[RMDB]
RNA sequence: GGGAACGACUCGAGUAGAGUCGAAAAUGCCUCUGGUUCUGAACAGAUGGGCACCCUCAUCUUGUAUUUGUGAUUAAUGUCUAACAAUGUAGUUUUGUGAGAAGGGUUUGCUGAUACAGCCUUGCUGCAGAUGCUGCGAACUGUGGCCUGGGGCAGAAAUCAGAGUACACUUCGGUGUACUCUGAUUAAAAGAAACAACAACAACAAC
Reactivity to 2A3 in 0.01 (KOAc 150mM, MgCl2 10mM, bicine 150mM(pH8.5), 24C), signal-to-noise 3, nucleotides 027 to 156: u080g000c010c000u000c000u040g000g040u170u190c080u150g080a050a050c030a070g050a100u140g010g000g050c010a010c040c010c050u010c020a110u030c000u100u120g070u120a150u080u090u050g060u070g030a040u010u140a160a090u260g070u040c070u050a050a040c040a090a090u130g020u090a120g100u130u110u160u100g060u060g050a050g000a070a080g020g010g020u120u280u160g020c000u070g010a050u050a290c070a010g060c000c040u120u200g010c040u030g040c000a030g000a150u100g020c000u030g030c030g030a150a090c030u050g010u050g040g030c010c020u040g000g010g030g000c030a010g130a000
Reactivity to DMS in 0.01 (KOAc 150mM, MgCl2 10mM, bicine 150mM(pH8.5), 24C), signal-to-noise 1, nucleotides 027 to 156: u020g020c000c010u000c010u020g020g030u010u000c060u010g020a090a110c020a070g010a040u000g030g010g000c000a120c090c010c000u020c050a150u010c090u000u020g000u000a090u000u010u010g010u010g010a130u000u000a050a120u010g020u020c050u000a220a040c080a020a080u000g010u010a080g000u010u010u010u000g020u000g010a120g010a080a070g000g010g000u000u000u010g060c030u010g000a130u000a060c100a100g020c080c080u000u000g010c000u000g030c040a080g000a110u020g000c020u010g050c060g000a050a150c000u000g060u010g000g040c030c090u000g010g040g030g000c020a080g000a140